[RMDB]
RNA sequence: GGGAACGACUCGAGUAGAGUCGAAAAUCACCCACUAAUAGGGAACGUGAGCUGAAUUGAACUUAGGAACAGUUCAUUCGGAUAAUUGGUUUUUGCGGCUGUCUGAUCAGGCAUUGCCGCGAAGCUACCAUCCGAAUCUAUAUAUUGUAAGCUGAGAGAAUAUUAUGGAGUUCGCUCCAUAAUAUUCAAAAGAAACAACAACAACAAC
Reactivity to 2A3 in 0.01 (KOAc 150mM, MgCl2 10mM, bicine 150mM(pH8.5), 24C), signal-to-noise 9, nucleotides 027 to 156: u100c030a120c010c040c000a030c040u110a080a210u080a150g020g010g050a080a050c070g090u110g050a030g010c020u020g040a060a090u110u070g010a050a030c040u060u050a110g100g100a100a030c020a050g010u020u020c010a010u020u010c000g000g010a010u030a080a110u170u120g000g020u060u090u020u050u230g000c000g000g000c000u000g000u000c010u030g150a270u220c140a030g000g010c010a020u010u300g000c000c000g000c000g000a000a000g000c030u020a010c000c020a000u000c000c000g010a010a000u000c020u010a060u010a050u000a050u170u190g030u070a060a050g010c020u030g030a030g000a000
Reactivity to DMS in 0.01 (KOAc 150mM, MgCl2 10mM, bicine 150mM(pH8.5), 24C), signal-to-noise 4, nucleotides 027 to 156: u010c050a150c010c000c010a120c080u000a100a150u000a120g020g010g000a090a090c100g020u000g010a120g030c040u000g010a100a140u000u000g000a030a070c040u000u000a070g010g000a100a140c070a040g000u000u000c010a300u000u000c010g010g010a030u000a030a080u000u000g030g020u000u000u000u000u000g020c000g010g020c000u000g000u000c000u000g010a190u000c140a060g030g000c010a040u000u000g030c000c000g020c000g000a000a010g010c020u000a030c150c050a080u000c000c010g000a050a020u000c020u010a050u000a090u000a070u000u000g000u000a060a090g020c030u010g000a170g000a300